An RNA of 177 nucleotides, treated with DMS and read out base by base. Values cover nucleotides 27 to 126. Values are in units of 0.01, from 0 to 300, in steps of 10.
RNA sequence: GGGAACGACUCGAGUAGAGUCGAAAAGCUCAGAAGGAGGCAGCUCGAGUUGCUGCUGCUGAUAAAGCUCGAGCGGACGCUGCGGACGCAGCUAGGAAGCAGAAGGUCGAAGCUGACAGGGUUGAGGAGGGUCUUAGAUGUUCGCAUCUAAGACCCUAAAAGAAACAACAACAACAAC
Reactivity to DMS in 0.01 (KOAc 150mM, MgCl2 10mM, bicine 150mM(pH8.5), 24C), signal-to-noise 2, nucleotides 027 to 126: g000c050u000c020a120g030a120a070g030g010a090g000g000c030a070g010c000u000c040g020a060g040u000u010g020c090u000g040c030u000g010c020u020g010a090u020a170a120a130g010c020u000c040g000a040g020c000g000g000a090c150g000c040u010g000c020g010g020a070c190g030c040a030g010c030u000a070g000g000a100a030g030c070a050g000a070a090g000g020u000c040g030a120a070g030c020u000g000a090c080a090g020g010g010u030u000g020a070g010g000

The data come from the RNA Mapping Database (RMDB), library OK2TRN. DMS adducts were read by reverse transcription with MarathonRT. The RNA was probed in 150 mM KOAc, 10 mM MgCl2 and 150 mM bicine (pH 8.5) at 24 C.